[RMDB]
RNA sequence: GGGAACGACUCGAGUAGAGUCGAAAAAGAGUACGGCCGCAAGGUUUCCGGUUGUGGAUGGCAGCGUGUGUGUCGCCCCGUCGUCUAGUGCUGGUUCUAGGGCUGGGGCGUCAGCAACCAGGUAAAAUUAAUGGUGUAUCUUCGGAUACACCAUUAAAAAAGAAACAACAACAACAAC
Reactivity to DMS in 0.01 (KOAc 150mM, MgCl2 10mM, bicine 150mM(pH8.5), 24C), signal-to-noise 4, nucleotides 027 to 126: a060g010a120g010u010a060c090g020g020c020c040g010c120a070a080g010g010u000u010u000c050c020g010g000u010u000g030u000g000g000a100u000g010g000c040a040g010c070g020u000g010u000g010u000g010u000c010g010c010c000c000c020g000u000c030g000u010c010u000a020g000u000g000c080u000g010g000u000u000c010u000a020g010g000g000c020u010g050g010g000g000c010g000u000c040a080g010c040a040a080c030c030a050g010g010u000a050a060a080a120
Reactivity to 2A3 in 0.01 (KOAc 150mM, MgCl2 10mM, bicine 150mM(pH8.5), 24C), signal-to-noise 1, nucleotides 027 to 126: a000g100a010g000u060a020c030g010g030c000c000g060c080a020a040g050g010u000u060u060c050c000g060g010u030u060g020u060g070g010a110u060g080g000c060a040g040c060g000u100g020u000g050u010g010u050c000g010c000c000c000c020g040u050c010g040u000c030u030a030g010u030g130c110u130g130g120u100u020c000u010a000g030g030g000c020u090g100g000g010g020c020g030u000c000a020g010c000a010a010c020c010a020g000g090u130a020a080a100a110
The record gives the reactivity of an RNA of 177 nucleotides to DMS and 2A3. The 2A3 profile rests on 1,375 reads. High 2A3 reactivity points to a flexible backbone, as in loops and unpaired stretches. The reactions ran in a buffer of 150 mM KOAc, 10 mM MgCl2 and 150 mM bicine (pH 8.5), at 24 C. 2A3 adducts were read by reverse transcription with SuperScript II with manganese. For DMS the reverse transcriptase was MarathonRT.